RNA sequence: GGGAACGACUCGAGUAGAGUCGAAAAAUAAUACAGCCAGCAAUAAUAAAAUUUGUGAUAACACAAGUUAUGCCUGUUAGCUCUGGAACCAUGUCAGAGAUGAUGCAAGAAACUUGGAACCUCUGUCAACAGCAGAUAACAGAAGGAACAUCAGUCCCCCUAGCAACUAUUUCGAUAGUUGCUAGGGAAAAGAAACAACAACAACAAC
Reactivity to 2A3 in 0.01 (KOAc 150mM, MgCl2 10mM, bicine 150mM(pH8.5), 24C), signal-to-noise 1, nucleotides 027 to 156: a030u110a000a070u040a050c000a000g130c140c020a090g000c070a080a120u200a020a060u230a010a140a070a040u050u050u020g000u000g130a090u210a300a000c030a000c000a020a050g000u090u000a010u070g020c020c000u040g020u020u040a000g010c020u000c020u000g020g090a060a070c050c010a140u130g020u110c000a000g000a040g000a050u110g050a000u060g050c040a040a070g150a100a270a000c050u040u020g030g000a050a020c000c000u000c000u000g040u010c090a070a050c020a110g020c000a020g000a010u100a110a030c000a000g200a160a130g070g020a020a050c050a050u300c090a000g040u070c030c040
An RNA of 207 nucleotides, treated with 2A3 and read out base by base. Values cover nucleotides 27 to 156. The RNA was probed in 150 mM KOAc, 10 mM MgCl2 and 150 mM bicine (pH 8.5) at 24 C.